RNA sequence: GGGAACGACUCGAGUAGAGUCGAAAAUCCAGUACGUUCGCGUACUGGAAAAGUCGCGCCUUGAGGGCGUGUACGGCAGCGCACACACACGACCCUCAAGCCAAAGUCCGUACUUCGGUACGGACAACAAAUCCAUGCUGUUCGCAGCAUGGAUUUGAAAAGAAACAACAACAACAAC
Reactivity to DMS in 0.01 (KOAc 150mM, MgCl2 10mM, bicine 150mM(pH8.5), 24C), signal-to-noise 3, nucleotides 027 to 126: u000c000c000a000g010u000a010c000g010u000u010c190g010c020g020u000a000c000u000g010g000a010a020a050a100g010u000c070g010c130g010c190c010u000u010g010a010g030g000g000c000g000u000g010u000a060c090g000g010c050a150g020c160g000c090a080c070a130c120a040c030a020c040g000a150c000c000c000u000c000a000a010g020c070c070a090a080a110g000u000c000c010g010u000a000c000u000u010c180g020g010u000a000c000g020g000a000c020a020a080
Reactivity to 2A3 in 0.01 (KOAc 150mM, MgCl2 10mM, bicine 150mM(pH8.5), 24C), signal-to-noise 4, nucleotides 027 to 126: u000c010c000a000g000u000a000c000g010u020u060c280g000c000g120u010a000c000u010g000g000a040a000a000a000g050u030c050g020c040g000c180c050u000u030g000a000g010g000g000c040g000u000g000u000a020c030g040g030c040a180g120c060g090c050a020c000a000c000a000c010a010c140g300a300c060c000c010u000c010a000a000g000c010c010a100a090a010g000u000c020c000g000u000a000c000u020u060c210g070g000u010a000c000g000g010a000c000a000a000

Chemical mapping of a 177-nucleotide RNA with DMS and 2A3. The RNA was probed in 150 mM KOAc, 10 mM MgCl2 and 150 mM bicine (pH 8.5) at 24 C. The data come from the RNA Mapping Database (RMDB), library M2PK50. For 2A3 the reverse transcriptase was SuperScript II with manganese.